[RMDB]
RNA sequence: GGGAACGACUCGAGUAGAGUCGAAAAAUUCAGACUCCACACCCUCCUAUCCAAAAUGCCUGUGGUGGAAAACAGAGGCUGAAUACUUAAAGGACAGAGGUUACCAAGAUUACAUAACACAGCUGGAGGUAUACUAUACUUUCGAGUAUAGUAUACCAAAAGAAACAACAACAACAAC
Reactivity to DMS in 0.01 (KOAc 150mM, MgCl2 10mM, bicine 150mM(pH8.5), 24C), signal-to-noise 5, nucleotides 027 to 126: a090u010u000c030a070g010a090c030u010c000c050a100c060a100c070c010c020u010c030c030u000a110u000c090c050a060a080a100a110u000g000c060c010u000g020u010g020g020u000g000g000a080a040a080a120c160a040g000a040g000g010c010u000g000a060a050u000a090c090u000u000a060a060a090g010g000a070c070a030g020a070g000g010u000u000a080c060c040a070a070g010a110u010u000a060c080a070u000a070a070c080a060c150a070g010c030u000g000g020a300
Reactivity to 2A3 in 0.01 (KOAc 150mM, MgCl2 10mM, bicine 150mM(pH8.5), 24C), signal-to-noise 4, nucleotides 027 to 126: a000u080u050c010a020g030a040c020u010c030c010a030c000a020c030c010c000u010c010c010u060a080u070c020c000a080a090a060a060u080g030c020c020u060g020u070g090g010u050g050g060a040a060a030a020c030a010g030a010g060g000c010u010g010a020a010u040a090c010u050u160a120a060a060g030g010a010c010a020g050a020g100g000u050u030a030c010c010a030a000g010a090u070u090a050c050a070u140a120a040c060a010c030a100g070c010u020g000g010a000